RNA sequence: GGGAACGACUCGAGUAGAGUCGAAAAGACUGAUGUAGAGUUCGGUUGGAGCGACAAGUAUUUAGCUUGAGAUAGCUAAAUCACCUCGGUAUGAUUAGCGUGAGACCUAGGAACCGUAGGGGUAUUCAAUGCUGUAUUGCGUUCGCGCAAUACAGAAGUCAGGUUAAUGAUUCGUCAUUAACCUGACAAAAGAAACAACAACAACAAC
Reactivity to DMS in 0.01 (KOAc 150mM, MgCl2 10mM, bicine 150mM(pH8.5), 24C), signal-to-noise 2, nucleotides 027 to 156: g010a100c010u000g000a060u000g000u000a140g020a120g020u000u000c030g040g010u010u000g010g020a120g030c030g040a100c030a020a050g010u000a040u000u000u000a010g010c000u000u000g010a300g020a170u010a010g000c000u000a000a030a060u010c000a060c030c030u010c030g050g020u000a060u000g020a130u000u010a090g030c030g020u000g010a170g010a110c080c020u010a100g010g000a080a080c050c030g030u000a050g000g010g010g030u000a110u000u010c040a090a110u010g010c010u010g000u010a010u000u000g010c010g020u000u010c300g060c030g020c000a000a000u000a010c010a010g000a040a040
Reactivity to 2A3 in 0.01 (KOAc 150mM, MgCl2 10mM, bicine 150mM(pH8.5), 24C), signal-to-noise 5, nucleotides 027 to 156: g050a010c070u080g030a050u100g070u130a030g010a030g070u090u090c050g010g010u030u050g030g020a020g040c020g070a040c040a080a020g040u080a040u010u020u010a010g000c000u010u010g020a030g010a070u160a040g000c000u000a010a000a010u010c020a030c010c010u020c020g010g020u200a120u150g070a080u080u050a010g020c010g010u040g060a130g010a050c000c020u020a020g010g040a030a030c020c010g020u060a040g030g010g000g000u030a090u070u170c110a090a090u200g050c000u000g000u000a000u010u010g000c000g020u020u040c190g010c010g000c080a000a010u000a000c000a000g010a020a000